[RMDB]
RNA sequence: GGGAACGACUCGAGUAGAGUCGAAAAUGAAGCAUAAUGUCACGUAACGCUGAUAACCGCGCGCAGUUCCGUCCAGAUGACCAUGAUUCAAAUCACUUCUUAUUGACAACUGUUGUCGGAAGUUAUCCAAAGCCAAAGUGGCUCAACCGCGCGAACGCGAAGUGAAAGGCUUCGGCCUUUCACUUCGAAAAGAAACAACAACAACAAC
Reactivity to 2A3 in 0.01 (KOAc 150mM, MgCl2 10mM, bicine 150mM(pH8.5), 24C), signal-to-noise 5, nucleotides 027 to 156: u150g050a070a010g030c040a060u070a160a110u210g040u030c010a000c070g060u090a150a000c060g000c050u010g010a040u010a090a040c020c040g010c000g000c000g000c070a010g020u080u000c090c050g010u010c030c050a030g020a060u070g040a070c050c020a060u090g030a070u120u120c090a090a130a100u070c020a010c040u050u010c020u100u190a180u160u210g010a010c020a050a040c060u110g100u300u150g060u190c010g020g020a030a020g010u010u010a010u000c040c060a150a050a030g020c020c010a070a120a020g100u060g050g000c010u030c040a040a110c050c020g020c000g010c040g050a040a000c050g020
Reactivity to DMS in 0.01 (KOAc 150mM, MgCl2 10mM, bicine 150mM(pH8.5), 24C), signal-to-noise 2, nucleotides 027 to 156: u000g010a140a060g030c070a120u000a120a110u000g030u020c050a060c060g000u010a090a160c060g000c030u030g000a120u010a100a100c060c030g000c080g040c010g010c040a060g010u010u000c050c020g020u000c050c060a130g010a160u010g010a080c030c100a180u000g000a090u000u000c080a050a090a140u000c120a030c050u000u000c030u000u000a090u000u020g020a060c000a030a080c150u000g040u010u000g020u000c000g020g010a090a050g020u000u000a070u020c030c130a030a100a070g020c010c010a040a120a210g000u010g020g050c000u000c090a060a100c070c010g030c030g010c020g000a060a050c080g000